[RMDB]
RNA sequence: GGGAACGACUCGAGUAGAGUCGAAAAAGUGGGUGCGGUGCGUCCGCGUAGUUCGACGAUUUCGCCGACGUUCCAGCACAAGGCUUCGGCGUCGAGCGCCCCGCUGACUGCUAUUGCCGAUGCGAGACUACUAUCCACGUUUCGACGUGGAUAGUAGAAAAGAAACAACAACAACAAC
Reactivity to DMS in 0.01 (KOAc 150mM, MgCl2 10mM, bicine 150mM(pH8.5), 24C), signal-to-noise 5, nucleotides 027 to 126: a120g020u000g000g020g020u000g010c000g020g020u000g010c030g010u010c000c160g020c030g040u000a050g020u000u000c040g010a070c150g010a160u010u000u010c050g020c010c090g010a060c050g010u000u000c020c020a120g040c080a040c120a080a130g000g010c020u000u010c060g020g000c010g000u000c050g000a030g020c040g000c080c030c020c050g010c050u000g000a100c120u000g030c050u000a110u000u000g010c020c030g010a100u000g010c050g000a130g000a250
Reactivity to 2A3 in 0.01 (KOAc 150mM, MgCl2 10mM, bicine 150mM(pH8.5), 24C), signal-to-noise 4, nucleotides 027 to 126: a000g090u100g010g040g000u050g010c050g090g070u100g040c010g030u030c010c000g000c000g010u010a040g050u000u060c070g090a040c070g030a130u090u080u080c040g000c020c020g020a010c000g010u040u030c020c010a020g030c020a020c030a090a040g100g000c000u030u030c050g010g010c000g040u040c020g050a010g030c010g040c020c000c020c010g010c010u030g030a090c030u090g040c010u080a120u130u180g030c000c010g040a040u070g020c030g020a050g030a030